Conditions: 150 mM KOAc, 10 mM MgCl2 and 150 mM bicine (pH 8.5), 24 C. This 177-nucleotide RNA was probed chemically with DMS. For DMS the reverse transcriptase was MarathonRT. It was measured as part of the RMDB library TTRDEL.

RNA sequence: GGGAACGACUCGAGUAGAGUCGAAAAGAUAUGGAGAUGCCGAGGAUCUAUUGGUCGGAAACGACCACGGUAGGGAGGCACUCCUAAGUCAAAGAUGAGUUUGGGGCUUCGGCCCCAAACUCAUCAAUCAAUUAGCAAAGUUCGCUUUGCUAAUUGAAAAAGAAACAACAACAACAAC
Reactivity to DMS in 0.01 (KOAc 150mM, MgCl2 10mM, bicine 150mM(pH8.5), 24C), signal-to-noise 3, nucleotides 027 to 126: g000a020u010a300u000g000g000a020g000a140u000g030c020c010g020a120g020g000a030u000c010u000a030u000u000g000g010u000c010g010g010a060a120a180c010g020a010c000c010a020c300g000g000u000a010g020g010g010a060g020g010c000a030c000u000c000c000u000a010a110g010u010c030a050a090a080g010a010u000g020a010g000u000u000u010g030g000g000g010c000u010u000c220g010g000c000c000c000c000a000a000a000c010u000c020a000u000c000a040a090